[RMDB]
RNA sequence: GGGAACGACUCGAGUAGAGUCGAAAAGCCGCGACCCUGGUCCUCGGAGAGGUCCGGGCCUGACCUUUUGGUUGGCGCUAACGCCCGUCGGGCUGUUUUGGCGCUGUUCAGGCUGAGUGUUGUGGUCUUUGAUUAUGAUCUUCGGAUCAUAAUCAAAAAAAGAAACAACAACAACAAC
Reactivity to 2A3 in 0.01 (KOAc 150mM, MgCl2 10mM, bicine 150mM(pH8.5), 24C), signal-to-noise 4, nucleotides 027 to 126: g030c010c000g020c020g010a010c020c000c100u110g020g010u050c000c010u030c030g250g070a140g020a000g120g000u000c010c000g030g010g000c000c000u010g000a030c020c010u030u170u110u250g170g000u080u180g030g010c000g010c000u000a020a000c000g020c030c020c040g220u160c210g000g000g000c060u110g060u010u060u090u080g010g000c000g000c010u000g030u020u060c000a000g020g000c030u050g070a120g110u110g000u010u040g010u020g000g050u030c060
Reactivity to DMS in 0.01 (KOAc 150mM, MgCl2 10mM, bicine 150mM(pH8.5), 24C), signal-to-noise 4, nucleotides 027 to 126: g000c000c010g010c030g000a020c010c010c030u010g030g010u000c000c000u000c030g020g020a150g010a030g010g010u000c010c000g020g000g000c020c010u000g000a030c040c040u000u020u030u020g010g020u010u020g000g010c010g000c010u010a030a020c050g010c000c000c010g020u020c200g010g010g010c010u020g010u000u000u010u010g010g000c000g020c000u000g010u010u010c010a020g010g010c000u010g000a120g010u020g010u000u000g020u010g000g010u000c050

The record gives the reactivity of an RNA of 177 nucleotides to 2A3 and DMS. For DMS the reverse transcriptase was MarathonRT.